RNA sequence: GGGAACGACUCGAGUAGAGUCGAAAAAUGCUCGCUCACCUAGAUACCAUAAAAGGUGUUGGUUCAUUUAGACAGCAGGACGGUGGCCAUGGAAGUCGGAAUCCGCUAAGGAGUGUGUAACAACUCACUGAUAUUCCAUAUUCGUAUGGAAUAUCAGAAAAGAAACAACAACAACAAC
Reactivity to DMS in 0.01 (KOAc 150mM, MgCl2 10mM, bicine 150mM(pH8.5), 24C), signal-to-noise 9, nucleotides 027 to 126: a050u010g010c030u000c020g010c030u000c020a040c030c020u010a080g010a090u010a100c080c070a080u020a070a070a120a090g000g010u010g010u010u000g000g020u010u000c040a060u010u010u010a090g020a090c090a080g010c050a050g000g000a060c070g010g020u010g010g010c030c040a060u010g010g000a060a060g000u010c040g010g000a080a060u010c010c030g010c080u020a080a100g010g010a040g010u000g010u010g010u010a060a070c100a040a060c070u010c090a180
Reactivity to 2A3 in 0.01 (KOAc 150mM, MgCl2 10mM, bicine 150mM(pH8.5), 24C), signal-to-noise 9, nucleotides 027 to 126: a000u070g010c010u010c040g040c010u020c020a030c000c000u020a030g040a110u130a110c020c050a070u140a150a120a020a040g040g010u020g020u040u020g020g000u040u010c010a020u030u040u040a080g010a090c030a020g040c010a010g040g020a010c030g040g030u050g020g000c010c000a020u080g040g040a070a030g030u040c000g000g020a050a030u010c010c010g000c080u050a050a060g080g000a020g020u040g010u030g020u060a060a030c040a030a040c030u020c050a060